[RMDB]
RNA sequence: GGGAACGACUCGAGUAGAGUCGAAAAGAGAUGAGCUGCGCGCGCGGAUGGACGACCUGCACCGCCAGGCAGCCGCCAUCCAAUGCGCCAACCCCCGCGUAAUGCAGGAGUAUGAGGACCGGUUGGCAUCCGUCAUCACUUUCGAGUGAUGACGGAUAAAAGAAACAACAACAACAAC
Reactivity to DMS in 0.01 (KOAc 150mM, MgCl2 10mM, bicine 150mM(pH8.5), 24C), signal-to-noise 2, nucleotides 027 to 126: g030a100g020a080u000g000a050g040c020u020g000c160g020c050g000c070g020c190g000g010a060u000g000g000a070c050g020a080c130c010u000g000c050a080c030c040g000c070c090a060g000g000c030a030g030c140c020g020c030c010a010u000c010c040a100a220u000g000c100g000c000c070a090a070c010c020c000c000c030g010c080g000u000a050a110u020g000c010a060g010g010a070g020u010a070u000g010a100g000g020a100c040c060g000g000u000u000g010g000c070